Structure probing data (DMS) for a 177-nucleotide construct. Source: RMDB library OK2TRN, as collected in RNAgym. For DMS, 566 sequencing reads were counted. The RNA was probed in 150 mM KOAc, 10 mM MgCl2 and 150 mM bicine (pH 8.5) at 24 C.
RNA sequence: GGGAACGACUCGAGUAGAGUCGAAAAUCUGAAACUAUGGAAUUCGCAGCCGGAUUGGGAAGGCGAUGAGCGGAAUGUAGUGCUUACCUUGUCUCGCAUUUGGUACAGCGCAGCAACCGGCAAGAUCAUACGCGGUCAAUUUCGAUUGACCGCGUAUAAAAGAAACAACAACAACAAC
Reactivity to DMS in 0.01 (KOAc 150mM, MgCl2 10mM, bicine 150mM(pH8.5), 24C), signal-to-noise 1, nucleotides 027 to 126: u000c030u000g020a080a050a200c080u000a110u000g000g000a150a120u000u000c020g090c000a210g020c010c020g000g020a230u010u020g020g020g000a190a060g000g020c020g020a050u000g010a300g020c020g000g000a090a090u000g010u020a070g020u000g000c030u000u000a070c020c040u020u010g000u000c040u060c160g000c090a040u000u030u020g030g000u000a000c180a050g010c010g010c000a300g000c030a010a120c000c010g010g020c020a090a020g010a090u000c090